[RMDB]
RNA sequence: GGGAACGACUCGAGUAGAGUCGAAAAUAUAUUUUUAUCGUUCUGUCAGUUUCAGCUCGAUGCGGCGGUUUCUGGCGCGGGCAUCGGCUGUGUUGGCGGUGUCGAGCGGCUGGUAUUCGCCAAAGCACCUAUAGUGCGGUUUCGACCGCACUAUAGGAAAAGAAACAACAACAACAAC
Reactivity to 2A3 in 0.01 (KOAc 150mM, MgCl2 10mM, bicine 150mM(pH8.5), 24C), signal-to-noise 1, nucleotides 027 to 126: u050a010u030a050u020u080u010u080u080a140u080c020g020u060u000c010u000g050u040c010a050g020u100u300u000c020a020g000c070u140c120g000a020u020g000c040g020g000c020g100g120u080u180u150c140u220g100g050c000g000c000g070g170g000c000a010u010c000g000g000c010u010g000u000g010u030u000g010g030c020g040g000u030g090u070c010g010a070g070c080g080g010c010u050g060g000u050a120u080u180c080g000c040c000a000a070a000g040c000a010
Reactivity to DMS in 0.01 (KOAc 150mM, MgCl2 10mM, bicine 150mM(pH8.5), 24C), signal-to-noise 2, nucleotides 027 to 126: u020a060u010a010u000u000u010u000u010a150u010c040g020u000u010c020u000g010u000c040a040g020u010u000u000c010a050g010c010u000c020g010a020u010g020c080g020g010c010g000g010u000u000u010c170u000g020g020c030g020c020g020g020g050c000a010u000c020g010g020c010u000g000u000g010u010u000g010g000c030g010g010u000g020u010c000g020a080g020c130g000g010c040u000g020g000u010a090u020u010c080g020c020c040a060a070a150g010c170a160
Chemical mapping of a 177-nucleotide RNA with 2A3 and DMS. Source: RMDB library OK2TST, as collected in RNAgym. The reactions ran in a buffer of 150 mM KOAc, 10 mM MgCl2 and 150 mM bicine (pH 8.5), at 24 C. For 2A3 the reverse transcriptase was SuperScript II with manganese. For DMS the reverse transcriptase was MarathonRT. Reactivities are rounded to 0.1 and cut off at 0 and 3. High 2A3 reactivity points to a flexible backbone, as in loops and unpaired stretches.